[RMDB]
RNA sequence: GGGAACGACUCGAGUAGAGUCGAAAAAGAUGAGCUCGCUGGGCUCUCGCGUGAGGGACCCAGAGCUGAAGCGCGCACGGCGACGAAGGGUCCUACCCACCACGAUGAGAGCCUGUGCUGAAGCGCGCACGGCAACCGAAAGGUGCGGUUCACCUAACGAUUGUAAUACGUUCGCGUAUUACAAUCGAAAAGAAACAACAACAACAAC
Reactivity to DMS in 0.01 (KOAc 150mM, MgCl2 10mM, bicine 150mM(pH8.5), 24C), signal-to-noise 1, nucleotides 027 to 156: a080g000a040u000g040a020g040c000u000c010g040c000u000g050g000g040c010u000c010u010c010g040c010g000u040g000a300g040g010g010a040c000c000c000a080g000a240g000c000u010g010a050a170g040c000g010c010g000c070a300c010g010g010c000g010a090c130g020a090a200g000g010g020u000c010c010u000a050c010c050c000a300c000c000a050c010g000a090u000g010a120g000a010g000c000c040u000g010u000g030c000u000g010a060a150g000c030g060c010g030c000a300c050g030g010c000a040a070c090c030g010a130a140a130g000g010u000g010c000g010g040u000u000c010a010c010c010u000a060a290
Reactivity to 2A3 in 0.01 (KOAc 150mM, MgCl2 10mM, bicine 150mM(pH8.5), 24C), signal-to-noise 4, nucleotides 027 to 156: a000g110a090u090g010a040g010c140u160c270g000c020u100g000g000g000c000u000c000u000c000g010c000g010u010g010a030g000g000g020a010c020c010c030a010g020a010g020c000u020g030a220a030g000c000g000c000g000c020a010c030g020g020c000g070a250c070g030a170a020g000g000g010u000c010c000u020a060c070c030c020a070c040c000a000c020g210a290u170g000a010g010a000g010c000c000u010g010u000g000c000u010g020a200a070g000c000g000c000g010c010a020c010g000g010c010a050a040c020c020g070a090a040a030g000g000u040g010c010g020g030u000u000c020a060c000c010u050a150a030